[RMDB]
RNA sequence: GGGAACGACUCGAGUAGAGUCGAAAAUACGCUAAGUUCGCUUAGCGUAAAAUAUAUGGGACUAUAUAAAACCUGAUAGCCGUAGAAGAUCAUGUUUCGGCAAAAUCACCAUCUUCGGAUGGUGAAAGGGGAGUAGUAGAUUCGUCUACUACUCCCCAAAAGAAACAACAACAACAAC
Reactivity to DMS in 0.01 (KOAc 150mM, MgCl2 10mM, bicine 150mM(pH8.5), 24C), signal-to-noise 1, nucleotides 027 to 126: u000a010c010g050c000u000a000a000g020u000u010c220g020c010u000u010a000g000c000g000u000a000a010a070a040u000a040u010a060u010g000g010g000a130c050u000a040u010a060u010a070a060a090a240c010c060u000g000a070u000a200g020c020c020g030u000a130g000a160a090g000a040u000c140a070u000g000u000u000u000c000g030g040c170a050a060a070a040u000c010a030c000c000a030u000c000u000u020c200g000g000a000u000g020g020u010g020a020a010a000
Reactivity to 2A3 in 0.01 (KOAc 150mM, MgCl2 10mM, bicine 150mM(pH8.5), 24C), signal-to-noise 1, nucleotides 027 to 126: u040a000c000g000c010u000a000a000g000u030u050c110g100c090u000u000a000g000c000g000u010a000a000a000a000u080a000u010a020u030g040g000g020a030c040u000a010u040a020u050a120a130a040a090c000c000u000g040a120u060a050g010c010c020g010u020a050g050a300a030g020a110u090c050a040u130g040u030u040u050c000g050g040c100a030a000a000a060u050c000a000c000c000a000u000c020u020u030c160g110g030a010u000g000g000u000g000a010a000a000

Overview:
Source: RMDB library M2PK50, as collected in RNAgym. Chemical mapping of a 177-nucleotide RNA with DMS and 2A3. Conditions: 150 mM KOAc, 10 mM MgCl2 and 150 mM bicine (pH 8.5), 24 C.